[RMDB]
RNA sequence: GGGAACGACUCGAGUAGAGUCGAAAAGAUAUGGACUAGGCUAGUCGGAUAUCGGAAACGAUAUCGCGACUUGGACCCUAGGUCCUAAGUCAAAACUCUGGGUUAGGGUUCGCCCUAACCCAGAGAAUCAAGUACAAAUCUUCGGAUUUGUACUUGAAAAAGAAACAACAACAACAAC
Reactivity to DMS in 0.01 (KOAc 150mM, MgCl2 10mM, bicine 150mM(pH8.5), 24C), signal-to-noise 4, nucleotides 027 to 126: g000a040u000a300u000g000g000a130c000u000a020g010g020c020u000a010g020u000c000g020g010a010u000a000u000c000g010g000a090a080a170c000g000a000u000a000u000c010g020c000g010a020c010u000u010g010g010a100c270c020c020u000a020g000g010u000c000c000u000a050a120g010u010c040a090a090a130a150c010u000c000u000g010g000g010u000u000a000g000g010g010u000u010c210g020c020c000c000u000a000a000c000c000c000a000g000a000g000a030a060
Reactivity to 2A3 in 0.01 (KOAc 150mM, MgCl2 10mM, bicine 150mM(pH8.5), 24C), signal-to-noise 2, nucleotides 027 to 126: g020a000u050a040u160g010g010a000c000u000a010g010g040c020u010a010g000u000c000g010g000a010u010a020u010c020g030g010a150a020a010c040g000a000u050a000u030c090g060c000g140a000c000u000u060g000g070a080c060c020c010u010a030g130g140u020c000c000u020a130a020g070u050c030a010a020a130a280c000u000c010u010g010g000g000u000u030a010g110g050g000u080u150c290g150c000c000c000u000a000a000c000c000c000a000g000a010g020a000a000
Chemical mapping of a 177-nucleotide RNA with DMS and 2A3. For DMS, 5,026 sequencing reads were counted. The 2A3 profile rests on 3,612 reads. The reactions ran in a buffer of 150 mM KOAc, 10 mM MgCl2 and 150 mM bicine (pH 8.5), at 24 C.